[RMDB]
RNA sequence: GGGAACGACUCGAGUAGAGUCGAAAAUGUGAGGAGUCGCCGCUGCCGCCACUGCCUGUGCUUCAUGAGGAAGAUGCUCGCCGCCGUCUCCCGCGUGCUGUCUGGCGCUUCUCAGAAGCCGGUGAGACGUAGUAGCGGAGUUCGCUCCGCUACUACGAAAAGAAACAACAACAACAAC
Reactivity to DMS in 0.01 (KOAc 150mM, MgCl2 10mM, bicine 150mM(pH8.5), 24C), signal-to-noise 2, nucleotides 027 to 126: u030g010u000g030a070g030g000a030g020u020c060g020c030c010g020c040u010g030c030c010g010c010c040a050c050u000g010c020c030u010g020u020g000c020u010u000c030a110u010g000a080g000g000a050a050g010a130u030g010c030u000c150g010c030c060g000c020c000g000u010c050u000c030c010c030g000c070g000u050g000c010u020g010u000c010u010g000g020c060g000c040u010u010c020u010c030a080g000a060a100g010c010c000g000g000u000g000a130g020a150
Reactivity to 2A3 in 0.01 (KOAc 150mM, MgCl2 10mM, bicine 150mM(pH8.5), 24C), signal-to-noise 5, nucleotides 027 to 126: u210g030u050g040a060g020g000a030g030u100c030g010c040c010g010c020u020g000c000c010g020c000c020a060c040u040g010c010c030u080g030u110g030c020u030u070c030a160u130g060a050g150g030a050a070g020a060u120g020c010u020c020g010c010c000g010c010c000g000u010c030u020c030c010c000g020c020g040u100g010c010u050g030u080c030u030g000g000c010g000c020u050u010c030u000c000a020g010a030a010g020c010c020g070g000u050g040a060g000a030
Structure probing data (DMS and 2A3) for a 177-nucleotide construct.
The DMS profile rests on 6,208 reads.
It was measured as part of the RMDB library OK1LIB.
High 2A3 reactivity points to a flexible backbone, as in loops and unpaired stretches.
The reactions ran in a buffer of 150 mM KOAc, 10 mM MgCl2 and 150 mM bicine (pH 8.5), at 24 C.